The record gives the reactivity of an RNA of 207 nucleotides to DMS and 2A3. For DMS, 4,856 sequencing reads were counted. Source: RMDB library OK3TST, as collected in RNAgym.
RNA sequence: GGGAACGACUCGAGUAGAGUCGAAAACCCAGCGACUCGAUAGUCAGAUUUGACUAUCGAGAAGGCGGGACUGGAUUCAGGGCAUUGAAGCCUCCACGAUGCGAAAGAGAAAUCCCUGAAUCCAGUCCGGUGAAAGGAGGCAUUACCGAAACGCCAACAGCCUAAAUAAUUUCGAUUAUUUAGGCUGAAAAGAAACAACAACAACAAC
Reactivity to DMS in 0.01 (KOAc 150mM, MgCl2 10mM, bicine 150mM(pH8.5), 24C), signal-to-noise 3, nucleotides 027 to 156: c010c010c020a170g010c110g000a300c000u010c000g010a020u010a010g020u020c010a090g010a280u020u020u000g010a020c000u000a000u000c000g020a030g000a020a070g020g040c010g000g010g010a070c000u010g000g000a040u000u000c020a000g000g050g020c020a060u000u030g020a080a140g010c030c010u010c010c000a300c020g010a080u000g020c020g000a150a150a160g000a190g000a140a120a130u000c020c020c010u000g000a020a010u010c010c000a010g000u010c000c000g000g030u000g010a070a050a050g030g050a070g000g010c030a300u000u010a060c000c010g010a130a090a130c030g010c000c000a050a300
Reactivity to 2A3 in 0.01 (KOAc 150mM, MgCl2 10mM, bicine 150mM(pH8.5), 24C), signal-to-noise 5, nucleotides 027 to 156: c000c000c010a020g090c070g170a090c010u000c010g010a000u010a000g000u000c010a050g070a300u300u240u170g000a000c000u000a000u000c000g000a000g000a000a050g010g000c010g000g010g000a000c000u000g000g000a000u000u010c000a000g000g000g000c020a020u000u010g050a150a040g010c010c000u000c000c000a020c010g000a010u010g010c030g100a220a140a150g110a090g040a010a100a050u160c010c000c000u000g000a000a000u000c000c000a010g000u000c000c000g010g000u010g020a070a070a050g000g000a000g000g010c000a020u000u030a000c000c010g090a210a130a010c010g000c010c000a020a040